[RMDB]
RNA sequence: GGGAACGACUCGAGUAGAGUCGAAAAAAACUUAUUUCAACAGCUCGCGAUGGUGUUAAACGCGGCGACAACUUCCAUAGUGUCUUAACAACAUUCAUUGAUGCUGCACGCGGCCCCGCUGGUGUGGACCAGCUAAAACAUUCGUGUUUUAGCUGGUAAAAGAAACAACAACAACAAC
Reactivity to DMS in 0.01 (KOAc 150mM, MgCl2 10mM, bicine 150mM(pH8.5), 24C), signal-to-noise 4, nucleotides 027 to 126: a030a050a060c120u030u010a100u000u000u000c070a090a080c060a090g020c020u000c090g020c060g000a080u030g010g020u000g000u010u010a020a040a090c040g010c020g010g000c080g020a090c090a050a050c080u000u000c060c070a080u010a050g020u000g000u000c080u000u010a040a060c150a060a020c040a010u010u000c130a050u000u000g000a050u010g010c020u000g000c040a070c020g020c040g010g000c040c010c030c020g020c070u000g000g000u000g010u000g010g000
Reactivity to 2A3 in 0.01 (KOAc 150mM, MgCl2 10mM, bicine 150mM(pH8.5), 24C), signal-to-noise 3, nucleotides 027 to 126: a000a000a000c160u240u090a180u040u120u110c040a080a060c010a040g080c040u090c050g000c030g050a040u090g030g060u040g020u130u090a060a150a010c050g000c010g010g020c010g060a020c010a060a030c030u070u000c020c010a050u060a080g020u020g010u000c010u070u070a060a020c030a000a020c010a020u040u110c020a020u050u170g030a030u050g030c010u010g000c020a000c040g060c000g030g020c040c000c000c010g000c040u040g000g070u050g020u060g070g030